[RMDB]
RNA sequence: GGGAACGACUCGAGUAGAGUCGAAAACUACUCUUCUUUCCCUUCUCUCGUCAUCCUCGGUCAACCUCUUAAGUUCCUCUUCUUCCUCCUUGCUCAGGCUCUUCCCUCCCGCGUUCAGUUGAUUUCUCUUGUUCUCGAGGGCCUUCCUUCGUCGGUGCCUAUUGUAAUUCUUCGGAAUUACAAUAGGAAAAGAAACAACAACAACAAC
Reactivity to DMS in 0.01 (KOAc 150mM, MgCl2 10mM, bicine 150mM(pH8.5), 24C), signal-to-noise 1, nucleotides 027 to 156: c030u000a040c010u010c010u000u020c050u000u010u010c010c000c000u000u000c050u000c020u000c050g020u010c030a090u000c030c020u000c060g020g030u030c050a070a130c030c030u000c040u010u010a080a180g010u010u010c040c010u000c070u010u010c050u000u000c000c020u000c020c020u000u010g000c050u000c070a110g030g020c020u000c030u000u000c000c020c010u010c010c000c030g070c100g050u000u000c040a210g010u010u010g000a200u010u000u000c040u010c020u000u020g020u000u000c010u000c030g030a080g020g020g010c090c060u020u000c000c010u010u010c060g020u000c030g000g030u000g000
Reactivity to 2A3 in 0.01 (KOAc 150mM, MgCl2 10mM, bicine 150mM(pH8.5), 24C), signal-to-noise 1, nucleotides 027 to 156: c020u090a040c010u030c010u080u040c040u030u060u060c020c010c000u100u000c070u000c040u020c010g120u040c030a090u050c050c030u020c010g040g020u020c030a040a020c020c010u010c050u100u120a100a070g000u070u060c030c000u030c040u100u060c000u020u040c020c010u020c000c040u000u050g030c020u060c030a030g020g000c020u040c000u050u060c000c020c000u000c000c010c010g050c000g040u010u060c040a100g000u000u030g090a290u030u070u040c010u000c010u030u180g060u160u060c070u000c020g000a030g000g020g030c030c000u090u100c000c020u050u090c050g020u030c030g050g060u080g010
Record summary:
The record gives the reactivity of an RNA of 207 nucleotides to DMS and 2A3. 2A3 adducts were read by reverse transcription with SuperScript II with manganese. The data come from the RNA Mapping Database (RMDB), library VIROID. As a SHAPE reagent, 2A3 marks flexible, mostly unpaired nucleotides at the ribose 2'-OH.